Structure probing data (DMS and 2A3) for a 177-nucleotide construct.
The 2A3 profile rests on 1,376 reads.
Values cover nucleotides 27 to 126.
High 2A3 reactivity points to a flexible backbone, as in loops and unpaired stretches.
The reactions ran in a buffer of 150 mM KOAc, 10 mM MgCl2 and 150 mM bicine (pH 8.5), at 24 C.
The data come from the RNA Mapping Database (RMDB), library M2PK50.
[RMDB]
RNA sequence: GGGAACGACUCGAGUAGAGUCGAAAAGUUAACACCUUCGGGUGUUAACAAAUAAGGGAAGUCGAGUGCAAAAAGCACAGUCUAGCCAAGACAAAACGACAAAAACAUCUCCCUUCGGGGAGAUGAACUGUUGUUAAGUCUUCGGACUUAACAACAGAAAAGAAACAACAACAACAAC
Reactivity to DMS in 0.01 (KOAc 150mM, MgCl2 10mM, bicine 150mM(pH8.5), 24C), signal-to-noise 1, nucleotides 027 to 126: g010u000u000a000a000c000a000c000c000u000u020c140g050g020g020u000g000u000u000a000a000c020a040a160a140u000a110a090g000g000g020a120a070g030u000c040g020a140g040u000g030c000a060a090a100a090a130g000c030a000c000a130g000u010c020u000a100g000c120c130a150a060g000a030c010a080a050a130a100c050g000a020c010a020a080a120a070a150c020a010u000c010u000c000c000c000u000u000c100g020g030g020g010a030g000a000u000g010a020a100
Reactivity to 2A3 in 0.01 (KOAc 150mM, MgCl2 10mM, bicine 150mM(pH8.5), 24C), signal-to-noise 1, nucleotides 027 to 126: g000u000u000a000a020c020a020c000c010u000u080c240g040g020g000u030g010u000u000a010a000c000a000a010a010u110a000a000g130g010g040a150a000g040u020c030g050a050g020u040g000c030a040a080a130a300a040g000c000a000c020a000g020u010c000u040a080g100c020c050a070a000g000a010c070a000a160a010a010c040g010a020c000a030a000a000a040a040c000a000u020c000u020c000c010c000u010u040c100g030g000g020g000a000g000a010u000g000a000a000